[RMDB]
RNA sequence: GGGAACGACUCGAGUAGAGUCGAAAACGCAAAGCUGCAGCGCGGCGCUCUGGAAGCCUUGCCCCGCGCACUGCUCUUUACAUGGCCCGACGUGAGGGCACUUCGCGGGCAGUGCUGCGGCCUCGUGAAACUGCCCCUAAGUUCGCUUAGGGGCAAACGCGUUGAAAGUAUUCGUACUUUCAACGCGAAAAGAAACAACAACAACAAC
Reactivity to 2A3 in 0.01 (KOAc 150mM, MgCl2 10mM, bicine 150mM(pH8.5), 24C), signal-to-noise 1, nucleotides 027 to 156: c080g030c030a040a040a000g000c010u010g000c010a000g080c070g020c040g150g070c080g000c120u000c030u170g070g030a090a040g010c000c020u040u080g000c000c010c000c020g000c000g000c030a010c070u060g010c000u050c030u100u230u240a040c050a170u160g030g010c020c020c140g070a140c030g000u000g060a170g000g030g010c030a020c000u010u050c000g010c020g150g000g000c020a030g030u000g010c000u010g030c000g000g000c000c000u010c000g010u000g050a100a040a000c110u030g010c010c020c000c000u030a010a010g010u030u140c170g080c210u010u000a010g000g030g000g000c000a000a000a000